RNA sequence: GGGAACGACUCGAGUAGAGUCGAAAAUACGCGAGGUUCGCCUCGCGUAAAAGAGGAGCGUAAACGUGAGCGUACGUAGUGCUCUACAUCGUUCCUACACGAAUGCACAUGGUUUCGACCAUGUGAACCCUAAAUGUCACUUCGGUGACAUUUAGGGAAAAGAAACAACAACAACAAC
Reactivity to 2A3 in 0.01 (KOAc 150mM, MgCl2 10mM, bicine 150mM(pH8.5), 24C), signal-to-noise 5, nucleotides 027 to 126: u030a000c000g000c000g010a010g030g040u040u080c140g080c060c000u000c000g000c010g000u000a000a000a000a010g120a040g060g070a080g020c030g040u130a130a140a060c070g050u080g130a110g110c060g080u080a000c020g020u030a020g070u040g120c000u000c000u010a020c010a050u030c010g010u010u000c000c000u030a020c060a000c050g190a160a070u240g020c000a000c000a010u000g000g040u030u040u090c210g080a010c010c010a000u000g000u000g010a000a020
Reactivity to DMS in 0.01 (KOAc 150mM, MgCl2 10mM, bicine 150mM(pH8.5), 24C), signal-to-noise 3, nucleotides 027 to 126: u000a030c010g040c000g000a040g010g010u010u010c190g010c000c000u000c000g010c010g010u010a000a000a060a090g020a190g010g010a120g000c000g030u000a060a060a020c060g030u010g000a150g070c300g010u000a070c040g010u000a110g010u000g000c010u000c020u000a040c070a090u000c010g000u000u000c000c000u010a050c170a120c130g000a100a050u030g000c000a000c000a020u000g000g000u000u000u000c230g000a040c000c000a000u000g000u000g010a030a080

The record gives the reactivity of an RNA of 177 nucleotides to 2A3 and DMS.
DMS (dimethyl sulfate) methylates the pairing face of unpaired adenines and cytosines.
Reactivities are rounded to 0.1 and cut off at 0 and 3.
For 2A3 the reverse transcriptase was SuperScript II with manganese.
High 2A3 reactivity points to a flexible backbone, as in loops and unpaired stretches.
The RNA was probed in 150 mM KOAc, 10 mM MgCl2 and 150 mM bicine (pH 8.5) at 24 C.
Reactivities are given for positions 27 through 126.
It was measured as part of the RMDB library M2PK50.
For 2A3, 6,422 sequencing reads were counted.